[RMDB]
The record gives the reactivity of an RNA of 177 nucleotides to DMS.
It was measured as part of the RMDB library TTRINS.
The reactions ran in a buffer of 150 mM KOAc, 10 mM MgCl2 and 150 mM bicine (pH 8.5), at 24 C.
DMS adducts were read by reverse transcription with MarathonRT.
RNA sequence: GGGAACGACUCGAGUAGAGUCGAAAAGAUAUGGAUCGACCCAGCGCAAAAAGUAGGUGGUGGAAGUAUAUCGGAAACGAUAUAUGGAGCCACCUACUUUUUGAACUACGCUGGUCGAUCCUAAGUCCCUAAAAGGACUGUUCGCAGUCCUUUUAGGAAAAGAAACAACAACAACAAC
Reactivity to DMS in 0.01 (KOAc 150mM, MgCl2 10mM, bicine 150mM(pH8.5), 24C), signal-to-noise 3, nucleotides 027 to 126: g000a130u020a220u000g000g010a000u000c000g000a020c190c120c080a000g010c000g000c010a000a010a010a000a030g010u000a010g010g020u010g000g010u000g000g010a300a230g010u000a000u000a010u000c000g000g010a170a120a190c000g000a000u000a000u000a020u000g020g010a300g000c000c000a000c000c000u010a000c010u000u000u000u010u000g010a060a080c150u020a300c000g010c000u000g000g000u010c020g010a000u000c000c000u000a010a060g000u010c030